Structure probing data (DMS and 2A3) for a 177-nucleotide construct. Values cover nucleotides 27 to 126.
RNA sequence: GGGAACGACUCGAGUAGAGUCGAAAAUCGCAUUUCAGUCAGGGCCGCCGUAAUUAGCUAUGUGCACUUCAGGUUGCUGGCAUUCUAAUUCGAGGGCAGUGAAGGGCGCGGGGUUCGUCGCAUGGCAACGGCUAUAUCGGUUCGCCGAUAUAGCCGUAAAAGAAACAACAACAACAAC
Reactivity to DMS in 0.01 (KOAc 150mM, MgCl2 10mM, bicine 150mM(pH8.5), 24C), signal-to-noise 1, nucleotides 027 to 126: u000c080g000c010a120u030u030u050c040a100g000u020c080a070g000g020g040c000c000g070c010c000g060u040a000a030u020u010a040g030c140u010a000u020g000u050g000c070a000c010u040u010c190a100g000g050u020u000g010c010u030g010g000c070a050u000u030c080u000a040a030u020u000c130g060a160g000g000g000c000a070g030u000g020a060a090g010g010g020c040g000c000g000g030g010g010u000u000c040g000u020c040g020c030a020u000g000g000c050a120
Reactivity to 2A3 in 0.01 (KOAc 150mM, MgCl2 10mM, bicine 150mM(pH8.5), 24C), signal-to-noise 1, nucleotides 027 to 126: u000c020g030c070a080u000u070u100c000a030g030u000c020a040g030g050g000c030c000g110c010c040g030u000a120a000u100u030a070g020c030u030a000u180g110u090g080c030a000c000u120u100c030a010g120g070u070u150g060c030u000g040g000c020a030u060u000c060u020a000a050u090u000c000g070a080g000g000g000c000a000g020u030g060a020a000g010g000g000c030g000c090g010g020g000g000u000u010c010g000u050c010g000c030a110u090g010g000c070a100
The reactions ran in a buffer of 150 mM KOAc, 10 mM MgCl2 and 150 mM bicine (pH 8.5), at 24 C.